[RMDB]
RNA sequence: GGGAACGACUCGAGUAGAGUCGAAAAAUGACAUGCUAGGCUAAGACCAGUAAGCAAAGUCAGGCUUAGAUUUAGGGAUACUAUGCUAGUAUUGGAAUCCAUGUGGGUUCUGAUACUAGCAUAGUGCCUAACGAAAAGUGUUCGCACUUUUCGUUAGAAAAGAAACAACAACAACAAC
Reactivity to DMS in 0.01 (KOAc 150mM, MgCl2 10mM, bicine 150mM(pH8.5), 24C), signal-to-noise 9, nucleotides 027 to 126: a100u010g010a080c090a120u000g010c010u000a050g010g010c020u010a120a120g010a100c050c060a130g010u010a100a110g010c120a070a100a110g000u000c010a180g000g000c080u000u000a050g010a090u000u000u000a080g010g000g010a110u010a010c000u000a000u000g000c000u000a000g000u000a000u000u000g000g000a010a000u000c000c000a240u010g020u020g020g010g010u000u000c000u000g010a000u000a000c000u000a000g000c000a000u000a000g010u000g010c060
Reactivity to 2A3 in 0.01 (KOAc 150mM, MgCl2 10mM, bicine 150mM(pH8.5), 24C), signal-to-noise 8, nucleotides 027 to 126: a010u110g030a030c050a060u110g030c010u020a010g120g020c020u090a250a070g040a160c010c020a080g110u170a140a050g050c060a080a060a030g010u020c010a010g030g000c020u050u080a040g020a200u150u100u220a080g010g030g040a020u030a130c000u000a000u010g000c010u000a000g000u000a010u000u000g020g000a000a000u000c020c050a100u300g170u300g160g000g000u010u000c000u000g000a000u000a000c000u000a000g000c000a000u000a000g000u000g000c000

Source: RMDB library OK2TRN, as collected in RNAgym. The record gives the reactivity of an RNA of 177 nucleotides to DMS and 2A3. For DMS, 32,526 sequencing reads were counted. The 2A3 profile rests on 12,589 reads. Values cover nucleotides 27 to 126.